[RMDB]
RNA sequence: GGGAACGACUCGAGUAGAGUCGAAAAAAAAAAAAGAUAUGGACCACAUCGAUCACUAUGCUCGUUGAUCUCGAAUCGGAAACGAUUCGAGGGAGAGCUAGUGGGAGUGGUCCUAAGUCAAAAAAAACAUAUGUUACAAGUUCGCUUGUAACAUAUGAAAAGAAACAACAACAACAAC
Reactivity to 2A3 in 0.01 (KOAc 150mM, MgCl2 10mM, bicine 150mM(pH8.5), 24C), signal-to-noise 3, nucleotides 027 to 126: a000a000a000a000a010a020a170a070g070a040u140a080u100g000g000a000c020c020a000c030a270u230c110g140a090u140c010a010c020u050a060u300g000c000u000c010g300u300u040g010a020u010c000u000c010g010a000a010u010c000g020g040a070a020a060c030g010a000u010u000c010g000a000g000g010g000a020g000a000g010c010u010a000g010u000g010g030g000a050g000u010g010g000u000c000c000u000a010a020g020u020c020a080a090a060a010a050a020a060a010
Reactivity to DMS in 0.01 (KOAc 150mM, MgCl2 10mM, bicine 150mM(pH8.5), 24C), signal-to-noise 3, nucleotides 027 to 126: a010a010a000a040a050a090a200a080g010a040u000a300u000g000g010a010c000c000a010c000a140u000c100g010a080u010c000a000c000u000a000u010g020c000u000c000g020u000u010g000a030u000c010u000c000g000a010a000u000c010g010g010a090a080a180c000g020a020u000u000c000g000a010g000g000g000a010g020a020g020c000u000a000g010u010g000g000g010a030g040u000g000g000u010c000c000u010a010a050g010u010c020a010a030a010a040a040a070a130a170